[RMDB]
RNA sequence: GGGAACGACUCGAGUAGAGUCGAAAAGAUAUAAGUUACUGAGCAUGUUAUGUUGGAAAGAUAACAUGCUGUAGUAAUAAUGAAUUGCGGAACGCCUUAGGCUGGAAACAGAGCAGGGUUAGCAAUCGCUUGUAUACGGUGCAAAGUUUGCGAUGAGCACCAUCAGAUGGUUCGCCAUCUGAUGGUGAAAAGAAACAACAACAACAAC
Reactivity to DMS in 0.01 (KOAc 150mM, MgCl2 10mM, bicine 150mM(pH8.5), 24C), signal-to-noise 1, nucleotides 027 to 156: g030a110u000a070u010a050a180g040u000u000a010c000u000g050a050g010c000a010u010g010u000u000a000u030g000u000u010g000g030a220a130a300g000a020u020a000a010c000a010u010g020c000u000g060u000a000g000u000a040a040u000a120a200u010g000a040a080u030u010g000c000g040g000a100a120c190g020c000c030u000u000a060g020g030c030u020g020g000a190a110a150c020a080g020a090g050c010a140g070g000g080u000u000a090g040c020a040a010u000c010g010c070u010u000g000u000a090u030a090c090g000g000u000g000c040a060a080a180g010u000u010u000g010c010g020a150u030g010a180g020
Reactivity to 2A3 in 0.01 (KOAc 150mM, MgCl2 10mM, bicine 150mM(pH8.5), 24C), signal-to-noise 4, nucleotides 027 to 156: g090a000u090a000u020a180a020g010u010u010a000c010u030g030a000g010c000a000u000g000u000u010a030u030g230u220u140g080g070a130a070a020g050a030u000a000a000c010a000u000g000c000u000g000u000a000g000u000a000a030u040a020a030u080g090a060a040u010u030g000c010g010g100a050a040c070g080c020c000u070u100a080g020g000c020u030g050g020a080a070a000c040a030g030a020g030c040a050g010g030g000u070u130a010g000c020a010a030u040c030g000c020u030u030g000u040a090u010a080c060g070g000u060g030c030a070a070a120g020u070u130u090g060c030g040a040u090g030a060g010